[RMDB]
RNA sequence: GGGAACGACUCGAGUAGAGUCGAAAAUAAGAGAAAUAAACAAGUGGUGGUAGUCCGCCACUCUAAGGGGACGCCUUUAGAAGAAGAGGCUAGGUGGUAUUCCGGUGUGGGAUACUUGGUAAUAUGUAAGGGGAUGGUACGUUCGCGUACCAUCCAAUCUACGCGUAAUGUUCGCAUUACGCGUAGAAAAAGAAACAACAACAACAAC
Reactivity to 2A3 in 0.01 (KOAc 150mM, MgCl2 10mM, bicine 150mM(pH8.5), 24C), signal-to-noise 1, nucleotides 027 to 156: u090a020a000g040a050g050a000a020a110u290a070a080a030c140a300a020g020u010g060g000u020g000g130u010a000g020u060c000c000g000c040c000a000c000u000c010u010a010a000g000g030g020g000a010c140g140c010c000u010u000u000a010g050a020a000g010a050a010g010a070g030g000c010u020a010g020g070u090g010g000u010a020u020u030c040c040g080g160u180g000u260g120g000g000a000u010a040c000u000u060g000g000u060a070a060u090a060u150g090u100a070a050g160g000g050g000a000u000g000g000u000a000c000g010u000u110c120g000c000g040u000a000c000c000a000u000c000c000a000a000